[RMDB]
RNA sequence: GGGAACGACUCGAGUAGAGUCGAAAACGUGUUAAGUCUUCUCGUCUAUUAGCGACAGAUAGGGCGUAGAAAGGAUGCGAUUGUAGCUGAGAUAUGUAUGGACAGGAGCUCCUUGGCAGGUGGCACGCCAUGCUGGUACAUUCGUGUACCAGCAUGGAAAAGAAACAACAACAACAAC
Reactivity to 2A3 in 0.01 (KOAc 150mM, MgCl2 10mM, bicine 150mM(pH8.5), 24C), signal-to-noise 5, nucleotides 027 to 126: c040g020u040g030u100u050a120a040g030u010c010u040u000c020u030c020g040u000c010u020a060u040u070a070g050c020g050a020c010a020g050a050u060a030g050g030g000c020g030u010a010g100a040a050a010g070g020a030u130g020c010g030a080u010u130g030u050a020g020c040u020g040a020g040a080u120a080u190g120u060a100u080g050g000a000c030a030g010g030a010g000c000u010c010c020u040u020g030g010c050a020g040g040u050g040g000c030a010c040g000
Reactivity to DMS in 0.01 (KOAc 150mM, MgCl2 10mM, bicine 150mM(pH8.5), 24C), signal-to-noise 5, nucleotides 027 to 126: c080g040u000g010u010u010a050a100g000u020c020u000u000c010u010c040g000u000c030u020a080u000u010a070g010c010g020a070c030a050g010a050u010a050g000g000g000c010g020u020a070g010a100a070a050g030g010a070u030g010c020g000a140u030u010g010u000a070g020c030u000g000a120g010a080u030a070u030g010u020a070u020g020g000a040c050a040g000g000a260g010c030u000c040c020u000u000g000g030c060a050g000g020u020g000g000c060a090c090g000